This 177-nucleotide RNA was probed chemically with 2A3 and DMS. 2A3 adducts were read by reverse transcription with SuperScript II with manganese. For DMS, 3,641 sequencing reads were counted. Source: RMDB library OK2TST, as collected in RNAgym. For 2A3, 1,869 sequencing reads were counted. Conditions: 150 mM KOAc, 10 mM MgCl2 and 150 mM bicine (pH 8.5), 24 C. For DMS the reverse transcriptase was MarathonRT.
RNA sequence: GGGAACGACUCGAGUAGAGUCGAAAACAGCUGUAUGCGGUCGUCGACGUCGGCAAUGGCGUGCUGUUGAAGACCGAGCAGCAGGUGCUGGGUGUGAUCAAUGCGCCCACCCAGACGUUGGUGGGUCCUACGGUACUCGUUUCGACGAGUACCGUAGAAAAGAAACAACAACAACAAC
Reactivity to 2A3 in 0.01 (KOAc 150mM, MgCl2 10mM, bicine 150mM(pH8.5), 24C), signal-to-noise 2, nucleotides 027 to 126: c040a050g020c000u050g030u150a110u220g110c030g040g000u000c000g040u020c030g020a030c020g020u080c030g110g090c140a160a290u270g120g010c060g050u070g090c030u140g050u110u090g000a080a020g000a000c020c010g000a010g000c010a010g010c010a000g090g060u110g060c030u000g010g000g010u030g020u070g060a170u180c120a160a100u170g040c070g000c050c010c010a000c000c010c000a040g050a100c060g050u050u020g060g010u030g010g000g040u010c000
Reactivity to DMS in 0.01 (KOAc 150mM, MgCl2 10mM, bicine 150mM(pH8.5), 24C), signal-to-noise 2, nucleotides 027 to 126: c080a100g000c020u000g000u010a080u010g020c010g010g030u000c000g020u000c010g000a040c020g020u000c050g000g020c100a180a110u010g020g000c080g010u000g000c060u020g020u000u000g020a070a040g000a030c010c020g010a110g000c020a010g010c030a070g000g000u010g020c030u000g010g000g020u000g010u010g030a100u000c100a100a090u010g020c060g000c010c010c000a010c010c000c020a080g000a050c150g000u000u000g010g020u000g010g010g010u010c070